[RMDB]
RNA sequence: GGGAACGACUCGAGUAGAGUCGAAAAGUGAGAAUGCAGGCAUGAGUAGCGAAAGACGAGUGAGAAACUCGUCCGCCGAAUGACCAAGGGUUCCUGGGCCAGGUUAAUCCGCCCAGGGUGAGUCGGGUCAUACCACUAUUUUCGAAUAGUGGUAUGAAAAAGAAACAACAACAACAAC
Reactivity to 2A3 in 0.01 (KOAc 150mM, MgCl2 10mM, bicine 150mM(pH8.5), 24C), signal-to-noise 9, nucleotides 027 to 126: g090u080g010a060g040a100a050u090g010c050a020g030g000c010a030u050g030a040g100u150a040g040c030g040a160a080a020g010a010c010g000a000g000u020g020a090g120a100a090a020c000u000c000g000u000c000c000g000c010c010g050a050a040u070g070a120c000c030a040a060g050g010g000u070u060c000c000u000g000g000g000c060c120a110g030g030u090u220a110a050u090c000c010g010c010c000c000a000g010g000g000u030g010a010g030u040c020g010g010g020
Reactivity to DMS in 0.01 (KOAc 150mM, MgCl2 10mM, bicine 150mM(pH8.5), 24C), signal-to-noise 9, nucleotides 027 to 126: g010u020g000a080g010a080a070u010g010c060a070g010g010c030a050u000g000a140g010u010a090g010c030g010a120a160a120g000a010c000g010a010g000u000g010a180g010a130a130a030c000u000c000g010u000c010c040g010c150c020g000a090a050u010g010a070c020c020a080a110g000g000g000u010u010c000c000u000g000g000g010c030c150a140g010g000u010u030a090a130u030c010c040g000c000c000c000a020g000g000g010u010g000a060g000u000c020g000g000g010